[RMDB]
RNA sequence: GGGAACGACUCGAGUAGAGUCGAAAAACAACACGCUUCGGCGUGUUGUCGACGGAGGAAGCUGAGGACGCGCUUGUGCCGCAGCAGGGAAGCGCUGCGUAAAUCAGAGGUGAUUCGUCACCUCUAAUUACCUAUGACCGUUCGCGGUCAUAGGUAAAAAAGAAACAACAACAACAAC
Reactivity to 2A3 in 0.01 (KOAc 150mM, MgCl2 10mM, bicine 150mM(pH8.5), 24C), signal-to-noise 2, nucleotides 027 to 126: a010c000a000a000c010a000c000g010c000u000u010c210g160g000c000g000u000g020u010u000g010u010c020g040a040c040g040g060a050g050g000a070a000g030c050u010g070a030g060g030a020c030g000c000g010c050u030u070g070u120g070c030c020g000c020a000g000c000a000g100g030g050a110a030g030c010g020c040u020g010c010g040u070a050a050a060u190c030a010g010a000g030g030u010g000a040u050u060c170g050u000c040a000c010c020u000c000u000a010a010
Reactivity to DMS in 0.01 (KOAc 150mM, MgCl2 10mM, bicine 150mM(pH8.5), 24C), signal-to-noise 3, nucleotides 027 to 126: a050c010a000a000c010a010c010g020c000u000u020c160g030g030c000g040u000g000u000u000g010u000c050g010a110c100g000g000a080g000g000a090a050g000c050u000g010a060g020g020a070c060g000c070g010c100u010u010g020u000g000c100c020g000c050a020g010c030a080g010g000g020a120a080g000c140g010c020u010g000c090g020u000a030a050a060u000c140a000g010a020g010g010u000g010a030u000u010c200g010u000c000a010c000c020u000c000u020a020a060